[RMDB]
RNA sequence: GGGAACGACUCGAGUAGAGUCGAAAAGAUAUGGACCCUGUAGGGAGAACCUGUCGGAAACGACUGCGUAGGAUAGUUCGAGGAUCUACUGGGUCCUAAGUCAAAGCAUUGGCUUCGGCCAAUGCAACUGUUCACGUUAGUUCGCUAACGUGAACAGAAAAGAAACAACAACAACAAC
Reactivity to DMS in 0.01 (KOAc 150mM, MgCl2 10mM, bicine 150mM(pH8.5), 24C), signal-to-noise 2, nucleotides 027 to 126: g010a010u010a040u020g010g000a030c000c000c000u000g000u020a020g010g000g000a060g000a030a100c020c020u000g000u000c000g000g010a010a020a060c000g000a000c010u000g010c180g010u000a170g000g000a230u020a110g000u000u000c000g020a090g020g000a080u000c000u000a040c020u000g020g010g010u000c000c010u000a000a050g000u000c020a090a140a130g010c020a010u000u000g000g010c000u000u000c160g020g000c000c000a010a000u000g010c000a030a040
Reactivity to 2A3 in 0.01 (KOAc 150mM, MgCl2 10mM, bicine 150mM(pH8.5), 24C), signal-to-noise 2, nucleotides 027 to 126: g010a000u020a000u040g000g000a010c000c010c030u000g020u010a020g020g020g030a070g010a010a000c000c000u000g000u000c010g000g010a000a010a000c000g020a000c040u070g080c250g260u170a100g190g220a290u120a270g090u020u000c040g020a300g110g060a130u000c000u010a010c020u040g020g000g000u010c000c000u010a000a000g000u000c020a040a000a150g030c010a010u000u000g000g020c030u030u100c300g060g000c010c010a000a000u000g010c010a000a000

Background
An RNA of 177 nucleotides, treated with DMS and 2A3 and read out base by base. The 2A3 profile rests on 2,875 reads. For DMS the reverse transcriptase was MarathonRT.